[RMDB]
RNA sequence: GGGAACGACUCGAGUAGAGUCGAAAAACUUGUAGGUUUGUAGAAUUAGAUGACCAAGGGCAUCAUUUAGACUCCUAUUUUGUCGUUAAGAGGCAUACUAUGGAGAAUUAUGAACUAGAGAAGCACUGACGGAAUUGGUUCGCCAAUUCCAAAAGAAACAACAACAACAAC
Reactivity to DMS in 0.01 (KOAc 150mM, MgCl2 10mM, bicine 150mM(pH8.5), 24C), signal-to-noise 8, nucleotides 027 to 129: a060c040u010u010g010u000a020g020g020u010u000u030g000u000a010g000a050a070u000u000a040g020a040u030g010a080c000c000a040a100g020g010g020c050a070u020c000a080u010u010u000a040g030a190c030u030c030c050u000a080u030u030u030u000g030u020c000g010u000u000a150a120g030a150g020g020c000a000u030a070c160u000a090u080g000g010a030g050a050a080u020u000a060u040g000a030a070c080u000a110g010a110g000a070a060g000c080a060c110u040g030a160c180
Reactivity to 2A3 in 0.01 (KOAc 150mM, MgCl2 10mM, bicine 150mM(pH8.5), 24C), signal-to-noise 9, nucleotides 027 to 129: a010c040u040u050g020u050a070g030g020u030u040u050g040u060a030g010a070a030u110u020a060g030a070u020g050a080c020c050a060a060g030g030g000c010a010u000c000a010u070u080u060a070g030a070c000u000c000c000u010a050u030u050u020u020g010u010c020g030u030u050a170a050g100a170g090g000c000a000u010a060c030u060a040u120g000g000a020g010a020a010u100u070a050u090g030a010a000c010u020a040g000a000g010a110a000g030c080a020c090u040g020a040c090
The record gives the reactivity of an RNA of 170 nucleotides to DMS and 2A3. Reactivities are rounded to 0.1 and cut off at 0 and 3. For DMS, 36,621 sequencing reads were counted. Conditions: 150 mM KOAc, 10 mM MgCl2 and 150 mM bicine (pH 8.5), 24 C.